Structure probing data (2A3) for a 207-nucleotide construct. The reactions ran in a buffer of 150 mM KOAc, 10 mM MgCl2 and 150 mM bicine (pH 8.5), at 24 C. Reactivities are given for positions 27 through 156.

RNA sequence: GGGAACGACUCGAGUAGAGUCGAAAACACUAAGCCGGACGGCGCCCUCGCACCGAGUUCCGCUGCGGGUUCGCCUGCAAGAACGCAUGGUGUUGAGGCCCUGUCCGCCGCUGCGCUGCCACCUACUCUUCGCGCCGCUAGUCGAGCGGACUCCAGGGAAACUGCAUCAGUUCGCUGAUGCAGUUUCAAAAGAAACAACAACAACAAC
Reactivity to 2A3 in 0.01 (KOAc 150mM, MgCl2 10mM, bicine 150mM(pH8.5), 24C), signal-to-noise 1, nucleotides 027 to 156: c070a000c040u160a050a000g010c050c010g010g030a010c010g010g050c030g010c000c020c000u000c000g000c000a000c000c000g110a020g030u010u000c010c000g110c030u000g000c020g000g000g080u010u020c300g070c030c030u020g010c000a120a050g030a000a000c000g170c300a210u300g010g010u020g000u050u300g040a000g000g000c000c000c020u050g010u000c000c000g000c000c020g020c030u050g000c040g010c040u070g010c000c000a020c030c020u020a050c000u030c000u250u100c040g000c000g020c090c010g030c030u010a040g110u130c060g030a010g000c000g000g060a020c000u030c070c020a060g120g000